[RMDB]
Conditions: 150 mM KOAc, 10 mM MgCl2 and 150 mM bicine (pH 8.5), 24 C. An RNA of 177 nucleotides, treated with 2A3 and DMS and read out base by base. For 2A3 the reverse transcriptase was SuperScript II with manganese. For DMS the reverse transcriptase was MarathonRT. For 2A3, 1,612 sequencing reads were counted.
RNA sequence: GGGAACGACUCGAGUAGAGUCGAAAACAUACUCCAGAGUGCCAUGGAUAUCACUCUCAGAUGGCAGGCUGAUUCCUGCUCAAGAUGUAUCAUGGGUUCUAUCCCUGGUCUUGUGCCUCACACGGUAAACGAGGGUAUACUUCGGUAUACCCUCGUUAAAAGAAACAACAACAACAAC
Reactivity to 2A3 in 0.01 (KOAc 150mM, MgCl2 10mM, bicine 150mM(pH8.5), 24C), signal-to-noise 1, nucleotides 027 to 126: c020a040u130a060c020u080c070c020a040g000a000g050u100g080c050c010a060u090g080g000a070u040a030u170c020a030c030u020c020u020c040a060g050a130u030g060g000c040a000g020g000c020u060g050a140u110u100c000c010u010g030c000u000c010a010a040g040a080u080g040u110a110u130c030a110u170g000g000g080u150u060c040u050a090u060c000c000c000u000g020g000u000c010u010u000g060u080g050c000c000u140c020a140c000a010c100g110g000u060a020
Reactivity to DMS in 0.01 (KOAc 150mM, MgCl2 10mM, bicine 150mM(pH8.5), 24C), signal-to-noise 2, nucleotides 027 to 126: c180a090u000a060c050u000c030c050a020g000a070g000u000g010c060c010a030u000g010g010a100u010a080u010c070a030c110u000c050u010c120a100g000a110u010g000g010c000a010g000g020c300u000g000a160u020u010c000c000u020g000c000u000c040a050a030g000a060u010g000u000a060u000c050a050u010g020g000g030u010u030c180u000a120u000c020c000c020u010g000g000u000c030u000u000g000u000g000c020c050u000c110a060c080a070c180g010g000u000a050